[RMDB]
RNA sequence: GGGAACGACUCGAGUAGAGUCGAAAAACGAGAUUGCGCUCACCCAUAUUCAUCAGCUCCUCGACCUCGAAGCACUGGAAAGCGCCGAGCGCCAGUCCGUCCUGUUCGGCAUCAAGCAACUGGCCCAGAUGAUCCAUGGGUUCGCCCAUGGAUCAUCAAAAGAAACAACAACAACAAC
Reactivity to DMS in 0.01 (KOAc 150mM, MgCl2 10mM, bicine 150mM(pH8.5), 24C), signal-to-noise 1, nucleotides 027 to 126: a080c100g000a040g090a110u050u040g050c040g000c010u040c040a120c060c020c030a080u000a140u000u010c060a070u070c100a120g000c010u000c000c000u010c040g020a030c030c050u000c000g010a030a080g020c070a040c010u060g050g010a010a070a130g000c040g000c060c020g020a090g020c090g000c040c000a050g010u030c060c080g000u040c040c000u000g030u000u000c120g010g000c020a130u040c030a020a040g010c030a010a120c000u070g010g000c000c000c000a130
Reactivity to 2A3 in 0.01 (KOAc 150mM, MgCl2 10mM, bicine 150mM(pH8.5), 24C), signal-to-noise 3, nucleotides 027 to 126: a000c120g020a070g010a090u060u240g020c030g020c020u030c030a070c000c030c020a020u030a050u090u120c080a140u030c000a020g060c030u070c000c000u010c020g050a090c030c010u050c010g050a090a000g040c020a020c050u070g000g030a170a050a010g030c020g020c030c060g050a030g010c010g000c010c000a010g050u000c010c030g010u010c020c000u050g040u040u020c030g010g010c030a040u050c040a080a060g010c010a010a040c030u080g040g020c000c000c010a050
Structure probing data (DMS and 2A3) for a 177-nucleotide construct. As a SHAPE reagent, 2A3 marks flexible, mostly unpaired nucleotides at the ribose 2'-OH. The RNA was probed in 150 mM KOAc, 10 mM MgCl2 and 150 mM bicine (pH 8.5) at 24 C.